RNA sequence: GGGAACGACUCGAGUAGAGUCGAAAAGCAAACCUGACGAGCAUACGGACCGGUGGGAAGCCAACCCUGUCGCAGAAAACAGCCCUGAUGAGGCUCGAUGACAUGACCGAGGAGCAGGCGGAGGCAGAAUUGGAGCGUAUCCGGCGUGAAGAAAGGGUACUAUGAUUCGUUUCGACGAAUCAUAGUAAAAAGAAACAACAACAACAAC
Reactivity to DMS in 0.01 (KOAc 150mM, MgCl2 10mM, bicine 150mM(pH8.5), 24C), signal-to-noise 3, nucleotides 027 to 156: g020c030a060a050a160c010c020u030g010a140c040g010a080g000c060a130u010a060c100g020g000a080c030c040g020g020u000g010g020g020a140a100g020c050c020a040a150c020c000c000u030g010u000c030g030c060a150g040a100a070a060a100c080a070g020c020c000c010u020g030a140u000g010a160g000g000c020u000c010g060a140u010g000a090c040a120u010g020a070c020c030g020a170g010g000a120g050c040a090g000g030c040g010g000a200g000g020c050a060g010a070a090u000u000g000g000a070g010c080g010u000a090u010c020c000g030g000c000g000u000g000a030a100g000a090a080a090g020g010g020
Reactivity to 2A3 in 0.01 (KOAc 150mM, MgCl2 10mM, bicine 150mM(pH8.5), 24C), signal-to-noise 4, nucleotides 027 to 156: g030c040a040a050a060c000c010u030g040a040c070g040a050g060c050a060u080a130c050g050g020a040c020c030g020g010u050g040g030g040a070a030g020c020c020a030a050c010c020c000u010g020u060c050g000c090a040g090a050a100a020a040c040a030g020c010c010c010u140g090a140u110g050a080g020g000c010u020c030g050a070u100g040a030c040a110u090g030a070c030c020g010a040g020g030a060g030c020a020g030g030c020g000g010a030g030g000c020a010g050a060a030u080u100g030g010a020g010c040g020u040a040u050c010c030g050g000c020g040u070g040a040a080g040a050a050a000g020g010g010